[RMDB]
RNA sequence: GGGAACGACUCGAGUAGAGUCGAAAAGAUAUGGAGGUCUCACUAAGCUUGGAUUUAAGUCUCGGAAACGAGACUUUGUCAGCUUACUGAGAGCCUCCUAAGUCAAACCUAAACGUUCGCGUUUAGGCAAUAACACCCUGUUCGCAGGGUGUUAUUGAAAAGAAACAACAACAACAAC
Reactivity to 2A3 in 0.01 (KOAc 150mM, MgCl2 10mM, bicine 150mM(pH8.5), 24C), signal-to-noise 6, nucleotides 027 to 126: g030a040u100a080u230g000g000a010g020g010u000c000u010c000a010c010u010a010a010g030c030u200u300g200g000a070u300u300u180a020a010g010u000c000u000c010g020g040a110a090a040c010g000a000g000a000c010u000u000u000g020u000c010a000g000c000u000u010a010c020u000g010a010g060a040g050c010c000u000c000c000u000a070a010g000u000c050a130a100a190c020c000u000a010a010a000c020g020u090u120c300g020c000g150u000u010u000a010g000g000
Reactivity to DMS in 0.01 (KOAc 150mM, MgCl2 10mM, bicine 150mM(pH8.5), 24C), signal-to-noise 7, nucleotides 027 to 126: g000a060u010a300u010g010g010a010g010g000u000c000u000c000a010c090u000a000a010g010c000u000u010g030g010a010u000u010u000a010a010g010u000c000u000c000g010g000a120a110a240c000g010a000g010a010c000u000u000u000g000u000c000a030g000c000u000u000a000c140u000g000a020g000a100g020c000c000u000c000c000u000a000a060g010u000c060a120a170a300c000c000u000a010a010a000c000g020u000u000c270g010c020g020u000u000u000a000g000g000

Chemical mapping of a 177-nucleotide RNA with 2A3 and DMS. For 2A3, 13,599 sequencing reads were counted. The reactions ran in a buffer of 150 mM KOAc, 10 mM MgCl2 and 150 mM bicine (pH 8.5), at 24 C.